[RMDB]
Annotation: This 177-nucleotide RNA was probed chemically with 2A3 and DMS. DMS adducts were read by reverse transcription with MarathonRT. The data come from the RNA Mapping Database (RMDB), library OK1LIB. For 2A3 the reverse transcriptase was SuperScript II with manganese.

RNA sequence: GGGAACGACUCGAGUAGAGUCGAAAAGGCGAAUACCUACUGGCAGGAGGUAAAUCUAAGUCCCAAAUUUUCUAUCAGCGAGUUGGACCCAUGGGGGGAGGAAGAAGGAUGGUCAGUGGAAGGAUGGUCCCUAGUAGCGAUUCGUCGCUACUAGGGAAAAAGAAACAACAACAACAAC
Reactivity to 2A3 in 0.01 (KOAc 150mM, MgCl2 10mM, bicine 150mM(pH8.5), 24C), signal-to-noise 2, nucleotides 027 to 126: g070g020c000g010a020a090u080a130c000c030u030a030c060u050g040g190c020a080g060g050a010g050g010u020a030a100a000u140c100u100a020a200g070u140c000c010c000a000a190a030u040u030u020u020c030u010a120u000c020a030g110c010g060a000g040u040u010g080g010a070c010c020c010a110u120g000g000g000g000g000g000a080g070g000a010a060g000a010a010g020g010a000u020g030g040u030c090a030g010u010g040g030a110a000g050g020a000u060g000g020
Reactivity to DMS in 0.01 (KOAc 150mM, MgCl2 10mM, bicine 150mM(pH8.5), 24C), signal-to-noise 3, nucleotides 027 to 126: g000g030c060g000a040a060u030a030c070c000u000a070c080u020g010g010c100a120g010g000a040g000g000u000a000a110a100u010c060u010a040a170g020u000c000c010c030a140a050a140u020u040u070u030c060u020a040u060c170a080g050c040g020a020g000u000u010g010g000a280c020c020c010a060u050g010g060g000g020g030g000a060g000g000a080a020g010a110a070g020g010a110u050g010g000u000c060a060g020u010g000g030a020a100g040g020a060u000g010g010
Overview: For 2A3, 803 sequencing reads were counted.